The record gives the reactivity of an RNA of 177 nucleotides to 2A3 and DMS. DMS adducts were read by reverse transcription with MarathonRT. The 2A3 profile rests on 9,519 reads. Conditions: 150 mM KOAc, 10 mM MgCl2 and 150 mM bicine (pH 8.5), 24 C. For DMS, 26,424 sequencing reads were counted.

[RMDB]
RNA sequence: GGGAACGACUCGAGUAGAGUCGAAAAAGUUGGUAUGGGCUCAUUGAUUCUCUAUCAGGGAUAUGGGUUCUUGUGUCAUCGUAAUGUAUCUUGUGUCCUAUCCGUGGUCUAUUCGUUCUUAUGUAGAGAUGCGUACUGCUUUCGAGUAGUACGCAUCAAAAGAAACAACAACAACAAC
Reactivity to 2A3 in 0.01 (KOAc 150mM, MgCl2 10mM, bicine 150mM(pH8.5), 24C), signal-to-noise 6, nucleotides 027 to 126: a000g050u050u030g000g030u090a090u130g030g030g000c020u020c030a020u010u110g110a060u220u010c020u000c010u050a160u160c130a070g090g000g000a020u050a050u140g040g000g000u070u050c020u050u060g030u000g030u010c020a030u020c070g070u120a130a050u090g040u060a070u020c030u030u080g040u020g020u030c000c010u030a050u000c020c040g110u050g030g030u020c010u060a090u070u070c040g040u050u000c040u060u160a180u160g150u080a050g030a000
Reactivity to DMS in 0.01 (KOAc 150mM, MgCl2 10mM, bicine 150mM(pH8.5), 24C), signal-to-noise 9, nucleotides 027 to 126: a080g010u010u000g010g000u010a070u000g010g010g010c030u000c030a050u010u000g010a130u000u000c020u000c040u010a100u010c170a090g010g010g010a050u010a040u000g010g000g010u000u000c020u000u010g020u000g010u000c030a040u000c170g010u010a060a090u000g010u000a050u000c030u000u000g020u000g000u000c010c030u000a070u000c040c040g020u000g010g010u000c040u010a090u000u000c060g010u000u000c020u000u000a100u010g010u000a100g010a270